[RMDB]
RNA sequence: GGGAACGACUCGAGUAGAGUCGAAAAAAGCCCGAGGUGCAUGUCGAGGUGCGGUUUGCCUCGUAAAAAAGCCGCAAUUUAAAGUAAUCGCAAACGACGAUAACUACUCUCUAGCAGCUUAGGCUGGCUAGCGCUCCUUCCAUGUAUUCUUGUGGACCGUAUGCUGUGUGUUCGCACACAGCAUACGAAAAGAAACAACAACAACAAC
Reactivity to 2A3 in 0.01 (KOAc 150mM, MgCl2 10mM, bicine 150mM(pH8.5), 24C), signal-to-noise 2, nucleotides 027 to 156: a000a010g060c000c000c000g000a040g000g010u030g000c020a030u040g070u100c040g000a010g000g000u030g010c020g020g000u070u070u060g030c000c010u030c020g020u060a070a050a000a000a000a000g000c010c000g000c020a080a090u090u150u260a110a110a030g010u020a000a040u020c030g010c060a080a100a200c130g230a020c000g010a010u060a090a060c020u060a030c000u040c000u040c030u100a030g050c000a000g020c020u090u090a070g070g050c010u040g000g110c020u000a010g000c000g020c020u040c010c010u060u020c040c010a000u050g020u060a130u100u110c000u010u000g020u090g060g040a020c010
Description:
An RNA of 207 nucleotides, treated with 2A3 and read out base by base. The data come from the RNA Mapping Database (RMDB), library RSTRND. Conditions: 150 mM KOAc, 10 mM MgCl2 and 150 mM bicine (pH 8.5), 24 C.